[RMDB]
RNA sequence: GGGAACGACUCGAGUAGAGUCGAAAAUAGCAAUUAAUGUGCAUCGAUUAUCAGCUAUUGCCAGCGCCAGAUAUAAGCGAUUUAAGCUAAGAAAACGCAUUAAGAUGCAAAACGAUAAAGUGCGAUCCACUUCCAGGAUUUUCGAAUCCUGGAAGUGAAAAGAAACAACAACAACAAC
Reactivity to 2A3 in 0.01 (KOAc 150mM, MgCl2 10mM, bicine 150mM(pH8.5), 24C), signal-to-noise 2, nucleotides 027 to 126: u010a020g000c010a040a020u030u030a090a010u130g000u050g020c000a010u040c040g050a070u050u030a030u090c090a010g000c020u060a030u100u080g090c030c040a060g000c030g000c060c020a020g120a040u110a050u080a160a020g000c000g020a010u040u140u150a070a010g020c030u010a010a040g070a030a140a010a000c020g010c000a000u030u090a070a000g020a010u030g000c070a010a080a040a030c050g020a040u090a200a100a000g040u030g040c000g100a030u080c010
Reactivity to DMS in 0.01 (KOAc 150mM, MgCl2 10mM, bicine 150mM(pH8.5), 24C), signal-to-noise 2, nucleotides 027 to 126: u000a050g010c010a130a080u030u000a020a050u000g010u010g000c020a030u000c000g000a040u010u000a030u000c140a220g000c020u010a020u000u000g010c050c080a160g020c070g010c000c060a060g000a110u000a090u010a120a070g020c010g040a150u000u010u000a070a110g020c060u010a100a170g010a050a090a040a140c020g000c010a010u000u000a060a100g020a040u000g020c020a070a040a060a110c200g000a080u020a050a080a110g000u000g010c040g020a160u010c030
Chemical mapping of a 177-nucleotide RNA with 2A3 and DMS.
For DMS the reverse transcriptase was MarathonRT.
Source: RMDB library OK2TST, as collected in RNAgym.
The 2A3 profile rests on 1,177 reads.
The RNA was probed in 150 mM KOAc, 10 mM MgCl2 and 150 mM bicine (pH 8.5) at 24 C.
The DMS profile rests on 1,335 reads.
Values cover nucleotides 27 to 126.